[RMDB]
RNA sequence: GGGAACGACUCGAGUAGAGUCGAAAAGAUAUGGAUCCCGCCCUAACCCGUCGUUGAAACCUGCACGUUACGUCGGAAACGACGUAACGUGCAGGUGGAGACGGUUAGUAACAAGGAUCCUAAGUCAUCUACUCAUUAGGUUCGCCUAAUGAGUAGAAAAAGAAACAACAACAACAAC
Reactivity to DMS in 0.01 (KOAc 150mM, MgCl2 10mM, bicine 150mM(pH8.5), 24C), signal-to-noise 3, nucleotides 027 to 126: g000a060u010a300u000g000g010a010u000c000c010c060g010c300c250c010u000a020a020c140c040c120g040u000c000g000u000u000g010a150a190a020c000c000u000g020c000a000c000g020u000u000a010c010g030u000c010g000g020a100a110a300c000g010a020c000g010u000a000a000c010g040u000g000c000a010g010g010u000g000g000a060g020a010c000g000g020u000u000a020g010u000a030a110c180a150a080g000g000a010u000c000c000u000a020a080g000u010c020a150
Chemical mapping of a 177-nucleotide RNA with DMS.
For DMS the reverse transcriptase was MarathonRT.
Reactivities are given for positions 27 through 126.